[RMDB]
RNA sequence: GGGAACGACUCGAGUAGAGUCGAAAAUGGCGAGGUGACAGAUGCAGUGGAGGCACGCUCGCUGGGCCUGAACCCCAACCACAUCCACAUCUACAGUGCCAGCUGGGGCCCCGAGGAUGACGGCAAGAACCAUAGGCAACUUCGGUUGCCUAUGGUUAAAAGAAACAACAACAACAAC
Reactivity to DMS in 0.01 (KOAc 150mM, MgCl2 10mM, bicine 150mM(pH8.5), 24C), signal-to-noise 1, nucleotides 027 to 126: u000g000g030c060g010a060g000g030u000g020a130c080a000g020a090u000g020c040a050g050u000g000g000a070g040g000c050a030c040g000c010u000c050g040c070u000g010g000g000c030c040u000g010a110a140c030c040c000c040a070a150c060c060a000c130a100u010c010c000a130c080a050u000c070u000a070c100a060g000u010g020c020c050a100g030c080u000g030g000g000g020c020c000c030c000g000a060g020g020a060u000g010a090c070g000g010c050a030a100g000
Source information
Conditions: 150 mM KOAc, 10 mM MgCl2 and 150 mM bicine (pH 8.5), 24 C. This 177-nucleotide RNA was probed chemically with DMS. The DMS profile rests on 896 reads. The data come from the RNA Mapping Database (RMDB), library OK2TRN.